Source: RMDB library M2RFPK, as collected in RNAgym. The record gives the reactivity of an RNA of 207 nucleotides to 2A3.
RNA sequence: GGGAACGACUCGAGUAGAGUCGAAAAACAGAAGGGUGAAAGUUCAAGCAAGCUAGCCGGCAAAAAAGCAAACUUGACAACCAAGGAUAAAAGAGAUCUUAUCCAAGGAUGCAAAAGAUAAUCUCACAAAAGCUUCAUUCGUUCGCGAAUGAAGCAAGACCUUAUCGGUGUUCGCACCGAUAAGGUCAAAAGAAACAACAACAACAAC
Reactivity to 2A3 in 0.01 (KOAc 150mM, MgCl2 10mM, bicine 150mM(pH8.5), 24C), signal-to-noise 1, nucleotides 027 to 156: a000c040a000g050a060a030g070g030g010u060g060a200a000a030g020u140u110c040a020a000g000c030a030a030g020c030u100a010g000c000c030g070g000c080a010a020a090a150a020a020g000c020a010a050a000c000u020u040g040a100c000a000a000c000c010a040a020g030g010a010u010a000a030a020a020g060a040g000a050u070c020u020u020a030u000c030c020a030a030g050g010a010u040g030c060a060a160a050a000g020a040u100a120a100u040c060u030c040a050c060a060a140a010a030g000c030u000u000c000a000u000u010c000g070u050u080c240g020c010g090a000a020u000g000a000a000g000c000a000a000

The reactions ran in a buffer of 150 mM KOAc, 10 mM MgCl2 and 150 mM bicine (pH 8.5), at 24 C. Values are in units of 0.01, from 0 to 300, in steps of 10.